The record gives the reactivity of an RNA of 207 nucleotides to 2A3. The reactions ran in a buffer of 150 mM KOAc, 10 mM MgCl2 and 150 mM bicine (pH 8.5), at 24 C.

[RMDB]
RNA sequence: GGGAACGACUCGAGUAGAGUCGAAAAGUGAUCACGCUAUCCGAGACCCCGCGUGAUCACGAGUUUAGGGGUCAGGCCAUGUUAUGCUGGCUAUACGUACGCACCUAAGGGCUGCGGGUGCGUACGAAUCUUACGCAGCCCGCUGUUGCCAGCUAGACCACCUACUAAAUUUCGAUUUAGUAGGUGGAAAAGAAACAACAACAACAAC
Reactivity to 2A3 in 0.01 (KOAc 150mM, MgCl2 10mM, bicine 150mM(pH8.5), 24C), signal-to-noise 2, nucleotides 027 to 156: g010u010g000a000u000c000a010c030g060c100u260a110u200c180c060g050a110g010a020c000c000c000c020g010c000g000u010g000a000u000c000a000c010g010a040g020u110u210u120a060g000g030g000g000u000c020a000g030g000c010c000a080u140g110u290u210a100u180g210c050u010g010g010c010u020a020u020a060c000g000u000a000c000g000c000a000c000c000u010a070a160g020g000g000c000u000g000c000g000g000g000u000g000c020g000u000a000c000g000a000a010u020c010u060u120a040c140g000c000a000g000c000c000c010g000c010u010g000u010u000g000c010c020a060g080c100u030a020g030a060